[RMDB]
RNA sequence: GGGAACGACUCGAGUAGAGUCGAAAACAUGGAGUGUUCGCACUCCAUGAAAAUGCGCACGGCAGCGCAAGACGGGCCGACGUCAAUAAAUGCCGAAAUAAAAAAUCUAUCUGUUCGCAGAUAGAAAGUAUUAGAUGCUGUUCGCAGCAUCUAAUACAAAAGAAACAACAACAACAAC
Reactivity to DMS in 0.01 (KOAc 150mM, MgCl2 10mM, bicine 150mM(pH8.5), 24C), signal-to-noise 1, nucleotides 027 to 126: c010a010u000g000g010a000g020u000g020u000u010c200g010c000a000c000u010c000c000a000u000g000a070a050a150a180u000g010c010g010c010a080c000g010g010c020a020g000c020g040c010a040a070g010a040c000g000g050g000c080c110g000a100c000g010u000c010a060a060u020a020a080a060u010g000c010c000g020a140a170a090u000a010a030a080a130a070a030u000c020u000a020u000c010u000g010u000u000c280g050c010a000g000a020u000a000g000a000a040a050
Reactivity to 2A3 in 0.01 (KOAc 150mM, MgCl2 10mM, bicine 150mM(pH8.5), 24C), signal-to-noise 2, nucleotides 027 to 126: c010a000u000g000g000a000g010u020g020u070u150c160g070c080a000c000u000c000c000a000u000g000a000a000a000a010u070g010c020g000c040a060c040g010g000c020a050g000c020g000c010a000a010g000a000c000g020g110g110c070c020g130a300c000g040u000c000a010a010u190a130a030a010u020g010c030c000g040a060a050a000u180a020a110a010a010a000a000u000c000u010a000u010c010u000g040u020u040c260g000c100a000g020a000u000a000g010a010a010a000

Source information:
The record gives the reactivity of an RNA of 177 nucleotides to DMS and 2A3. DMS adducts were read by reverse transcription with MarathonRT. Values cover nucleotides 27 to 126. The reactions ran in a buffer of 150 mM KOAc, 10 mM MgCl2 and 150 mM bicine (pH 8.5), at 24 C. For 2A3, 2,797 sequencing reads were counted.